Overview
This 177-nucleotide RNA was probed chemically with DMS and 2A3.
RNA sequence: GGGAACGACUCGAGUAGAGUCGAAAAACAGUGAUGCCACCGCUCGCUUUAUUCGUGGUUUUUGGAAUGCCCAUGUUUAUGAUUGGCGAAUUCUCGAAACCAGCCGCCACGGUGAAUAUGGCAAACCGUUAGCCAGGUAAUUCGUUACCUGGCUAACAAAAGAAACAACAACAACAAC
Reactivity to DMS in 0.01 (KOAc 150mM, MgCl2 10mM, bicine 150mM(pH8.5), 24C), signal-to-noise 2, nucleotides 027 to 126: a050c080a040g010u000g020a100u010g030c060c050a040c080c070g020c090u000c150g000c020u000u000u020a050u020u030c090g020u010g000g000u000u000u000u000u000g010g000a020a040u000g000c060c010c020a000u000g010u000u010u030a080u030g010a090u010u000g000g000c110g000a090a080u000u000c000u000c110g000a010a020a060c030c020a270g000c110c050g020c080c050a070c130g000g000u000g000a050a040u010a050u010g010g000c020a100a070a100c160c090
Reactivity to 2A3 in 0.01 (KOAc 150mM, MgCl2 10mM, bicine 150mM(pH8.5), 24C), signal-to-noise 2, nucleotides 027 to 126: a020c060a020g020u010g140a090u130g050c040c020a030c010c040g000c000u070c040g010c080u080u070u060a060u090u110c070g000u060g000g020u040u000u000u030u130g050g010a070a030u060g000c000c040c020a030u070g190u050u160u040a240u180g070a110u010u060g010g000c020g040a060a090u050u030c040u020c010g040a030a020a030c020c020a050g040c000c050g060c070c020a050c050g070g000u090g030a030a010u070a020u060g020g020c000a000a080a050c030c020

2A3 is a SHAPE reagent: it acylates the 2'-hydroxyl of flexible nucleotides of all four kinds. It was measured as part of the RMDB library OK2TST.